[RMDB]
RNA sequence: GGGAACGACUCGAGUAGAGUCGAAAAGGAGAGAGUGUUGAUUUGGACUCCCUGAUAGGGCUUAGGCAUCUUUCAGCCCUUGCUUCGGGUUUUCGUCCUUAUUGGCCUCCCUCAUUGGGCCUCAGAAUGUUUCGGUUAGAUUCGUCUAACCGAAACAAAAAGAAACAACAACAACAAC
Reactivity to 2A3 in 0.01 (KOAc 150mM, MgCl2 10mM, bicine 150mM(pH8.5), 24C), signal-to-noise 2, nucleotides 027 to 126: g050g000a000g020a010g000a010g000u300g000u030u020g000a020u000u030u000g000g000a000c040u070c000c000c000u050g030a100u080a040g010g000g000c010u040u100a030g120g060c120a190u100c080u070u150u030c030a030g000c020c020c000u000u050g130c090u030u030c030g020g000g000u080u040u060u220c090g000u010c000c000u000u000a020u000u000g010g000c000c030u000c000c000c000u010c000a040u100u300g100g120g040c020c010u100c040a110g120a090a070